An RNA of 177 nucleotides, treated with 2A3 and DMS and read out base by base.
For 2A3 the reverse transcriptase was SuperScript II with manganese.
It was measured as part of the RMDB library OK1LIB.
[RMDB]
RNA sequence: GGGAACGACUCGAGUAGAGUCGAAAACGGGGUACGAGGGAUUGUUAAGGGUCUCUGGAUUAACUGUCCCGUACCCAUAGACUACGUGUGAAAUAAACCCAGAGACCCUUAUAUCAUACGUGGUCAAGGUACUCGUUGAUUUCGAUCAGUGAGUACCAAAAGAAACAACAACAACAAC
Reactivity to 2A3 in 0.01 (KOAc 150mM, MgCl2 10mM, bicine 150mM(pH8.5), 24C), signal-to-noise 9, nucleotides 027 to 126: c030g000g000g000g000u010a010c020g040a300g050g080g010a020u030u050g050u060u060a040a030g060g000g000u000c060u000c010u170g020g010a040u060u080a050a030c010u020g010u010c000c000c000g000u000a000c000c000c000a010u110a010g000a000c000u000a000c010g000u000g000u000g020a020a040a040u120a050a070a030c020c000c000a030g020a000g000a100c000c000c000u000u030a050u010a000u010c000a000u000a010c000g000u000g000g000u010c010a010a010
Reactivity to DMS in 0.01 (KOAc 150mM, MgCl2 10mM, bicine 150mM(pH8.5), 24C), signal-to-noise 9, nucleotides 027 to 126: c080g000g010g000g010u000a000c020g010a150g030g000g010a040u000u010g010u010u010a050a030g000g010g000u000c000u010c010u000g000g000a230u020u030a040a070c090u010g000u000c010c000c000g010u000a000c000c000c000a050u020a040g000a010c000u000a000c010g000u000g010u000g000a020a070a090u020a030a070a140c150c000c000a010g000a040g000a010c000c000c000u000u010a020u020a070u000c000a000u000a000c000g010u000g010g000u000c010a150a110
Conditions: 150 mM KOAc, 10 mM MgCl2 and 150 mM bicine (pH 8.5), 24 C. DMS adducts were read by reverse transcription with MarathonRT.